[RMDB]
RNA sequence: GGGAACGACUCGAGUAGAGUCGAAAAGACACGCUUCGCAGAUGACCUCCUCGUUGGUGUGUGUCGGUAAUGUUGUCAGUCACAGGCAACAGUUAACGAUCUGCUUAAAUAAAAAGAGAAGAACAAAGAUUAGCAUUUACUUCGGUAAAUGCUAAUCAAAAGAAACAACAACAACAAC
Reactivity to 2A3 in 0.01 (KOAc 150mM, MgCl2 10mM, bicine 150mM(pH8.5), 24C), signal-to-noise 7, nucleotides 027 to 126: g020a000c000a000c000g030c010u160u180c080g010c020a010g000a040u020g030a020c000c000u030c000c010u070c040g120u090u140g020g000u000g000u010g000u000g020u000c010g000g020u070a090a070u020g000u010u000g000u020c030a030g160u160c090a060c060a110g020g000c000a000a000c000a000g020u010u030a010a010c010g020a010u000c000u010g030c000u020u070a090a080a020u200a040a060a020a050a010g140a010g050a190a030g040a120a020c080a080a150a000
Reactivity to DMS in 0.01 (KOAc 150mM, MgCl2 10mM, bicine 150mM(pH8.5), 24C), signal-to-noise 4, nucleotides 027 to 126: g000a030c010a010c070g000c020u040u090c200g030c000a030g000a050u000g010a040c030c000u010c040c000u010c090g010u030u010g000g020u010g010u020g000u000g000u000c000g000g010u030a130a050u000g000u000u000g000u000c000a090g040u040c290a120c210a090g000g000c000a000a020c020a040g000u000u010a020a020c000g010a000u000c020u000g000c000u010u010a050a040a070u050a010a100a080a060a030g010a120g020a060a090g010a070a040c120a040a120a130